[RMDB]
Chemical mapping of a 177-nucleotide RNA with DMS and 2A3. Reactivities are rounded to 0.1 and cut off at 0 and 3. 2A3 adducts were read by reverse transcription with SuperScript II with manganese. For 2A3, 3,520 sequencing reads were counted.

RNA sequence: GGGAACGACUCGAGUAGAGUCGAAAAACAUAGGUUGGGCCAUAGGCGCUGCGGUUCAUCAUCUUGCCCUCGCCAGGACCGCUCCCGUUCUACUACUUGGCGUCGCGGUUACCGGGUUGGAAAACAAUCGACAUUAUGAAUUCGUUCAUAAUGUCGAAAAAGAAACAACAACAACAAC
Reactivity to DMS in 0.01 (KOAc 150mM, MgCl2 10mM, bicine 150mM(pH8.5), 24C), signal-to-noise 5, nucleotides 027 to 126: a110c080a090u010a060g010g010u000u000g020g010g010c020c040a080u000a090g010g010c030g000c110u000g010c070g010g010u000u020c080a090u000c110a060u010c080u010u000g000c020c010c020u000c060g020c030c040a090g010g000a060c040c040g010c040u000c040c030c020g020u000u010c060u000a090c090u000a070c090u010u000g000g010c030g010u000c080g020c040g000g000u000u000a070c040c020g000g010g000u000u010g020g000a050a050a070a080c190a090a130
Reactivity to 2A3 in 0.01 (KOAc 150mM, MgCl2 10mM, bicine 150mM(pH8.5), 24C), signal-to-noise 2, nucleotides 027 to 126: a000c030a030u180a060g080g030u050u060g030g020g020c000c010a000u050a080g070g000c050g000c060u030g020c000g070g000u100u060c010a060u040c000a040u030c070u070u110g030c030c010c010u010c020g010c010c030a030g030g000a010c010c010g000c010u050c030c010c000g030u080u040c010u110a210c020u030a030c020u060u060g060g000c030g020u010c020g020c010g050g020u040u050a050c000c010g000g070g000u050u070g070g000a130a100a030a040c040a010a100